Chemical mapping of a 207-nucleotide RNA with DMS and 2A3. The DMS profile rests on 5,194 reads. The 2A3 profile rests on 3,001 reads. The RNA was probed in 150 mM KOAc, 10 mM MgCl2 and 150 mM bicine (pH 8.5) at 24 C.

RNA sequence: GGGAACGACUCGAGUAGAGUCGAAAAACAUUGUGCUCUGUAUUGCUUGCCUUUACAAAGUGGAGUUAAGGAACCAACCCCACAGUGUCUGUGAAUACACUUGCAAUACCUUGCUUGGGAAGUGAAAGAAACCUAACUCGGUGUGAGUGGAAAUGAACUCCAUUAGGGAGUUCGCUCCCUAAUGGAGAAAAGAAACAACAACAACAAC
Reactivity to DMS in 0.01 (KOAc 150mM, MgCl2 10mM, bicine 150mM(pH8.5), 24C), signal-to-noise 2, nucleotides 027 to 156: a070c020a070u010u010g010u000g010c020u000c030u010g010u000a050u010u000g020c010u000u000g010c050c030u000u020u000a140c060a030a080a160g040u000g010g010a080g000u000u000a090a140g020g020a110a160c060c070a060a080c020c010c000c020a020c040a100g000u010g020u000c070u000g030u010g020a070a130u000a070c040a020c020u000u000g030c020a090a060u010a120c010c030u010u000g000c000u000u000g000g010g000a100a110g000u000g010a090a060a120g010a080a070a100c000c010u010a050a060c040u000c040g020g000u010g010u000g010a020g010u000g030g000a040a070a090u010g010a050a150
Reactivity to 2A3 in 0.01 (KOAc 150mM, MgCl2 10mM, bicine 150mM(pH8.5), 24C), signal-to-noise 5, nucleotides 027 to 156: a000c030a050u080u060g030u060g020c000u010c030u060g070u040a090u040u110g030c040u050u140g040c010c000u080u080u080a090c050a040a140a050g030u060g060g030a070g010u070u100a070a060g060g040a060a040c060c020a030a060c010c010c030c010a030c030a020g040u020g020u040c040u080g070u060g080a040a030u100a070c010a010c030u000u050g000c000a010a090u010a130c010c000u030u030g040c030u030u030g020g020g040a100a090g040u080g150a100a030a090g080a050a080a010c000c020u030a040a010c000u010c040g000g000u050g000u010g030a030g000u010g030g020a080a060a050u120g000a050a030